RNA sequence: GGGAACGACUCGAGUAGAGUCGAAAAUCGAUGCCGACAGCGUGGAUCAGCUUCUGACACCCCGCGCAUGGGUCGCGGGUGAUGUAGAGCGUCGCUCCGAUGAGGUCUUCUCGGUCGCAGUAGAGCAAUGCGUUGGCCUCAGCGUGGACAGCCACGCGCAUUGGACAUUUUUCGAAAUGUCCAAUGCAAAAGAAACAACAACAACAAC
Reactivity to DMS in 0.01 (KOAc 150mM, MgCl2 10mM, bicine 150mM(pH8.5), 24C), signal-to-noise 2, nucleotides 027 to 156: u000c040g010a140u000g000c010c040g040a090c040a090g030c000g020u000g010g000a050u000c050a100g010c000u000u000c020u000g000a130c020a070c010c000c000c000g040c020g010c010a300u000g020g030g050u000c000g040c070g000g010g000u000g010a050u010g030u000a150g000a070g000c030g010u010c020g010c030u000c030c010g010a050u000g010a020g030g000u010c020u000u010c090u010c100g020g030u000c060g030c030a220g000u000a080g000a120g000c030a070a040u000g000c140g030u000u000g010g040c020c000u000c030a050g000c020g030u000g010g030a100c090a170g010c000c000a010c000g020c020
Reactivity to 2A3 in 0.01 (KOAc 150mM, MgCl2 10mM, bicine 150mM(pH8.5), 24C), signal-to-noise 5, nucleotides 027 to 156: u120c020g030a030u120g060c040c020g040a060c090a060g020c000g020u030g050g030a100u170c070a040g010c030u210u110c010u170g050a000c000a000c000c010c000c000g000c010g000c050a190u230g200g060g050u150c030g000c000g000g000g010u050g020a120u000g000u010a000g000a000g010c010g030u040c020g010c050u000c010c000g020a050u050g000a010g000g000u000c000u140u000c030u050c050g100g010u080c090g010c020a030g040u210a040g020a040g030c050a070a060u070g000c010g030u040u040g010g000c000c000u020c000a020g000c040g050u120g010g010a060c040a030g060c000c000a010c000g000c010